[RMDB]
RNA sequence: GGGAACGACUCGAGUAGAGUCGAAAAUCUAGUCAGGAUGUUUUCCAUUCCACAAGGGAUACAUGAAUCAACGAAAGUGUCUGUUAAAGUUUUGGGAGAUUAAUACUGCUCGCGUUCUUCUUUAGCAUCUACGAAAAUUCUUCGGAAUUUUCGUAGAAAAAGAAACAACAACAACAAC
Reactivity to DMS in 0.01 (KOAc 150mM, MgCl2 10mM, bicine 150mM(pH8.5), 24C), signal-to-noise 3, nucleotides 027 to 126: u010c000u020a040g000u010c110a030g020g030a030u000g020u010u000u000u000c020c060a100u020u000c020c080a080c130a100a090g030g000g010a060u000a050c060a050u010g010a090a070u030c090a070a070c100g020a130a050a090g010u000g020u000c040u000g010u000u000a060a090a090g020u000u010u020u010g000g010g010a080g000a060u010u010a040a070u020a070c020u000g000c050u000c040g020c080g000u010u010c080u000u050c040u010u000u000a060g010c200a110
Reactivity to 2A3 in 0.01 (KOAc 150mM, MgCl2 10mM, bicine 150mM(pH8.5), 24C), signal-to-noise 4, nucleotides 027 to 126: u010c010u030a010g110u120c040a010g070g000a020u020g010u020u000u050u040c000c000a040u110u070c070c000a120c060a180a120g040g000g040a030u030a030c040a050u140g170a130a110u140c090a130a090c050g080a110a020a090g040u020g040u000c030u030g110u080u100a140a080a060g010u030u020u040u050g040g030g000a050g020a010u070u130a060a060u070a110c000u010g000c000u010c060g020c020g020u060u010c000u070u000c000u030u060u020a030g050c000a050

Conditions: 150 mM KOAc, 10 mM MgCl2 and 150 mM bicine (pH 8.5), 24 C. Chemical mapping of a 177-nucleotide RNA with DMS and 2A3.